[RMDB]
RNA sequence: GGGAACGACUCGAGUAGAGUCGAAAAGAUAUGGAAUAUCAGCUAUUGAGCUGGAGGUCGGAAACGACCUCACAGCAAUGAUGUAGCUGAGUAUUCCUAAGUCAAAACAGUCGCUUCGGCGACUGAACUGUAUAUCAAGCUUCGGCUUGAUAUACAGAAAAGAAACAACAACAACAAC
Reactivity to 2A3 in 0.01 (KOAc 150mM, MgCl2 10mM, bicine 150mM(pH8.5), 24C), signal-to-noise 3, nucleotides 027 to 126: g010a010u030a010u060g000g000a000a000u020a020u020c000a000g000c000u030a010u070u130g090a010g000c010u000g030g010a010g020g000u010c000g010g000a010a010a010c000g000a000c000c020u000c010a010c000a000g000c000a040a090u300g090a040u270g010u020a000g000c000u010g010a010g000u010a010u000u010c000c000u000a020a000g010u010c020a010a020a160a250c020a010g010u010c010g010c020u070u130c300g210g000c000g000a010c010u000g010a050a020
Reactivity to DMS in 0.01 (KOAc 150mM, MgCl2 10mM, bicine 150mM(pH8.5), 24C), signal-to-noise 4, nucleotides 027 to 126: g000a020u000a090u010g000g000a030a020u000a020u000c000a010g010c000u000a000u000u000g010a300g010c010u000g000g000a000g010g010u000c000g020g000a020a010a080c000g010a010c000c000u000c000a010c000a010g020c000a050a040u010g010a040u020g010u010a000g010c000u020g010a110g010u000a010u000u000c000c000u000a000a120g000u010c010a130a100a160a300c010a000g020u000c000g010c010u000u000c210g030g010c000g010a010c000u010g020a030a110

Conditions: 150 mM KOAc, 10 mM MgCl2 and 150 mM bicine (pH 8.5), 24 C. An RNA of 177 nucleotides, treated with 2A3 and DMS and read out base by base. 2A3 adducts were read by reverse transcription with SuperScript II with manganese. For 2A3, 8,278 sequencing reads were counted. The DMS profile rests on 4,459 reads.